[RMDB]
RNA sequence: GGGAACGACUCGAGUAGAGUCGAAAAGGUAAAUUAUUCUCUCCAUCAUCUGUAUUGGAAGGUUUCGUCGGGAUGUUAGAUUAUACACAAAGGGGGAAAUUAGCUGUUGCGGACAUCCCACCUCAAACGGGUAAAAUCAUUUCGAUGAUUUUACCCGAAAAGAAACAACAACAACAAC
Reactivity to DMS in 0.01 (KOAc 150mM, MgCl2 10mM, bicine 150mM(pH8.5), 24C), signal-to-noise 2, nucleotides 027 to 126: g010g020u000a080a110a100u000u030a080u020u020c010u000c030u010c010c040a040u030c080a130u010c090u000g010u010a130u000u010g000g060a090a100g000g020u000u000u000c100g050u010c140g040g000g010a000u020g000u030u020a050g070a090u000u010a130u040a070c060a050c040a090a050a050g000g000g030g030g000a010a040a070u040u000a150g000c080u000g030u020u000g040c000g020g000a040c060a000u000c000c000c000a130c130c050u000c030a090a070a100
Reactivity to 2A3 in 0.01 (KOAc 150mM, MgCl2 10mM, bicine 150mM(pH8.5), 24C), signal-to-noise 2, nucleotides 027 to 126: g070g080u170a090a050a130u110u240a050u190u040c060u000c000u000c020c020a060u040c000a000u020c030u100g040u120a140u030u150g100g000a160a150g120g020u000u070u110c080g050u000c050g000g000g000a020u000g100u010u000a020g000a120u190u130a120u110a130c050a010c000a070a220a100g060g010g000g000g130a000a020a090u020u010a100g070c050u040g060u110u160g080c000g020g000a000c000a000u000c000c000c020a180c000c000u040c000a010a090a090
Source: RMDB library OK1LIB, as collected in RNAgym. Structure probing data (DMS and 2A3) for a 177-nucleotide construct. The reactions ran in a buffer of 150 mM KOAc, 10 mM MgCl2 and 150 mM bicine (pH 8.5), at 24 C. High DMS reactivity at an A or C suggests that its Watson-Crick edge is free.